The record gives the reactivity of an RNA of 177 nucleotides to 2A3 and DMS. The DMS profile rests on 2,721 reads.

[RMDB]
RNA sequence: GGGAACGACUCGAGUAGAGUCGAAAACCCUGGUUAUUCGUAACCAGGGGUUGAGUGAAUCCUCUGAGUGCAUCGGUGGAUCACACGAAACGCAUGGACGACAAUUACGGUUAUUCGUAACCGUAAAGCUACUUUUUCUGUUCGCAGAAAAAGUAGCAAAAGAAACAACAACAACAAC
Reactivity to 2A3 in 0.01 (KOAc 150mM, MgCl2 10mM, bicine 150mM(pH8.5), 24C), signal-to-noise 3, nucleotides 027 to 126: c010c010c000u010g010g020u000u020a060u060u080c250g010u010a010a000c000c000a000g050g000g000g000u040u120g060a050g000u020g000a060a080u000c000c010u000c010u020g040a030g000u260g120c140a110u000c000g050g000u030g000g020a010u010c010a020c010a010c080g050a060a050a010c050g000c060a100u150g090g050a050c010g030a050c060a080a130u050u010a010c010g030g000u010u010a010u060u070c210g030u040a010a000c000c000g000u000a000a010a020
Reactivity to DMS in 0.01 (KOAc 150mM, MgCl2 10mM, bicine 150mM(pH8.5), 24C), signal-to-noise 3, nucleotides 027 to 126: c010c000c000u000g000g000u000u000a020u010u010c130g000u000a010a010c000c000a010g030g010g000g010u000u000g000a210g000u000g000a200a070u000c010c000u000c000u000g010a060g010u020g000c220a090u000c010g020g020u000g000g000a020u000c040a030c000a080c010g000a130a070a070c100g010c110a060u000g020g000a080c060g000a070c150a120a130u000u000a000c000g000g000u010u000a040u000u010c170g010u010a000a010c000c000g010u000a000a020a080
2A3 adducts were read by reverse transcription with SuperScript II with manganese.
For 2A3, 4,172 sequencing reads were counted.